[RMDB]
About this RNA: An RNA of 177 nucleotides, treated with DMS and 2A3 and read out base by base. Reactivities are rounded to 0.1 and cut off at 0 and 3. For 2A3, 3,206 sequencing reads were counted. For DMS the reverse transcriptase was MarathonRT. For 2A3 the reverse transcriptase was SuperScript II with manganese.

RNA sequence: GGGAACGACUCGAGUAGAGUCGAAAAGUUCGGCAAAGGUCAACAGCGACCCCAACGGCGACUCCUGCAUUACCGCCGGAUUGGUCGUCGGCACGCCGUUAACGUCAAUCAGGCAACCUGGCGGCACGGCAGGUGGUAUGUUCGCAUACCACCUGCCAAAAGAAACAACAACAACAAC
Reactivity to DMS in 0.01 (KOAc 150mM, MgCl2 10mM, bicine 150mM(pH8.5), 24C), signal-to-noise 3, nucleotides 027 to 126: g030u000u000c040g020g000c030a090a240a130g020g020u000c070a110a060c100a100g000c080g000a100c050c010c020c070a100a100c040g000g000c000g010a040c040u000c010c000u000g030c060a090u000u010a090c200c100g010c020c050g000g000a130u000u010g030g010u010c010g020u010c030g010g020c170a080c130g010c020c050g010u010u000a030a120c070g030u000c100a060a060u030c130a070g010g000c010a070a100c070c030u000g000g000c020g020g000c130a060c150
Reactivity to 2A3 in 0.01 (KOAc 150mM, MgCl2 10mM, bicine 150mM(pH8.5), 24C), signal-to-noise 2, nucleotides 027 to 126: g010u020u040c000g000g000c020a090a050a110g070g020u040c040a050a040c050a230g070c050g070a050c020c040c010c010a040a040c020g010g010c020g030a010c020u020c080c000u020g030c020a050u030u300a120c020c090g010c010c030g020g000a050u080u130g090g000u030c010g000u020c000g000g040c050a030c080g010c000c010g000u030u090a050a020c030g030u000c000a000a100u070c020a020g000g050c020a030a060c030c020u030g020g000c000g000g020c040a040c080